[RMDB]
RNA sequence: GGGAACGACUCGAGUAGAGUCGAAAAGGGUGAGACUUAGGAACCGUAGGGGUAUUCUCAAAGGAAGCUUUUGCAGUGACGCCCAUGUAAGUGGGAUAUAACAACAGAACUCGUAUGAGUAGCCUAAUAAAUCGGACCUUCUUCGGAAGGUCCGAAAGGACAGACUAAUCUUCGGAUUAGUCUGUCCAAAAGAAACAACAACAACAAC
Reactivity to 2A3 in 0.01 (KOAc 150mM, MgCl2 10mM, bicine 150mM(pH8.5), 24C), signal-to-noise 1, nucleotides 027 to 156: g000g020g030u020g010a030g020a030c030u030u160a020g000g000a030a060c080c020g010u090a000g020g040g020g020u050a080u070u010c040u040c080a070a060a010g080g000a070a070g070c050u110u060u040u180g030c010a000g000u010g040a010c050g000c060c000c000a000u050g080u130a150a140g000u020g000g050g000a030u040a000u020a170a150c080a020a000c010a020g020a010a030c000u020c080g040u250a030u180g020a000g000u090a020g000c020c010u000a060a040u040a150a230a070u070c000g000g000a000c000c000u020u010c020u020u020c080g050g010a000a000g000g000u040c010c000g000a000a000a000

Source information: Chemical mapping of a 207-nucleotide RNA with 2A3. Source: RMDB library M2RFPK, as collected in RNAgym. Reactivities are rounded to 0.1 and cut off at 0 and 3. For 2A3, 560 sequencing reads were counted.